[RMDB]
RNA sequence: GGGAACGACUCGAGUAGAGUCGAAAAUCUUUGGCUUUCGAGCCAAAGAGUGGGUGCAAUGUCCUUUAAGCACCAAACACGGAAAAACCGUGAAUGGACAAAAAAAUCACAGUUUCGACUGUGAUAACUGAUAAUAAAGCUUCGGCUUUAUUAUCAGAAAAGAAACAACAACAACAAC
Reactivity to DMS in 0.01 (KOAc 150mM, MgCl2 10mM, bicine 150mM(pH8.5), 24C), signal-to-noise 3, nucleotides 027 to 126: u000c000u000u000u000g000g010c000u000u000u000c110g030a010g010c000c000a000a010a010g010a010g010u010g000g020g010u000g020c000a180a100u000g020u000c000c000u000u000u020a130a200g010c000a000c010c000a070a170a220c010a000c000g000g000a120a140a100a190a140c010c000g020u000g000a030a070u000g010g020a020c020a000a000a060a120a070a150a020u000c000a000c000a020g000u000u000u000c180g000a040c010u010g020u000g000a000u010a040a130
Reactivity to 2A3 in 0.01 (KOAc 150mM, MgCl2 10mM, bicine 150mM(pH8.5), 24C), signal-to-noise 4, nucleotides 027 to 126: u010c010u010u000u010g000g000c020u060u080u110c250g140a000g010c000c000a000a000a000g010a010g040u090g110g000g030u030g010c050a190a300u120g020u010c010c000u020u050u040a020a000g000c000a000c010c020a000a030a000c010a000c000g010g020a170a130a050a170a130c000c010g000u000g030a000a040u070g000g000a000c000a020a120a010a000a010a000a010u020c010a000c000a010g000u010u040u140c190g090a020c000u000g000u010g010a000u010a010a040